This 177-nucleotide RNA was probed chemically with DMS and 2A3. The data come from the RNA Mapping Database (RMDB), library OK1LIB.

RNA sequence: GGGAACGACUCGAGUAGAGUCGAAAAGGAGACUCCAACCAGUACAGGGUGAGUCCUGACAAGCUUGUCAGUGACAAGUGGUUUCAGACACAGAGGUCAAAAGUGAGCAGGACCUUGUUUGAUGAUCACCACAAUUUCCGUUCGCGGAAAUUGUGGUAAAAGAAACAACAACAACAAC
Reactivity to DMS in 0.01 (KOAc 150mM, MgCl2 10mM, bicine 150mM(pH8.5), 24C), signal-to-noise 1, nucleotides 027 to 126: g050g000a140g000a050c080u010c000c080a060a270c030c030a080g000u020a090c110a080g000g010g030u000g000a080g130u000c010c000u000g010a020c170a050a250g000c120u030u000g040u000c020a060g000u000g000a000c050a090a050g000u000g000g000u000u010u000c000a040g000a000c100a070c160a110g000a030g000g000u020c000a110a070a040a110g020u000g000a190g000c090a230g000g000a080c000c010u020u000g010u000u000u000g010a030u010g000a030u000c050
Reactivity to 2A3 in 0.01 (KOAc 150mM, MgCl2 10mM, bicine 150mM(pH8.5), 24C), signal-to-noise 2, nucleotides 027 to 126: g010g020a070g050a020c000u040c050c020a030a140c000c000a040g030u090a070c040a070g000g050g000u090g120a040g010u000c010c000u020g040a000c010a000a150g110c060u090u020g000u060c060a130g090u030g120a000c010a060a020g000u020g030g000u000u160u030c090a030g000a030c000a000c000a120g060a000g030g000u000c010a010a040a120a040g180u230g100a010g000c030a020g050g030a000c000c000u070u040g150u050u000u080g060a120u000g000a030u080c060
Conditions: 150 mM KOAc, 10 mM MgCl2 and 150 mM bicine (pH 8.5), 24 C. The 2A3 profile rests on 715 reads.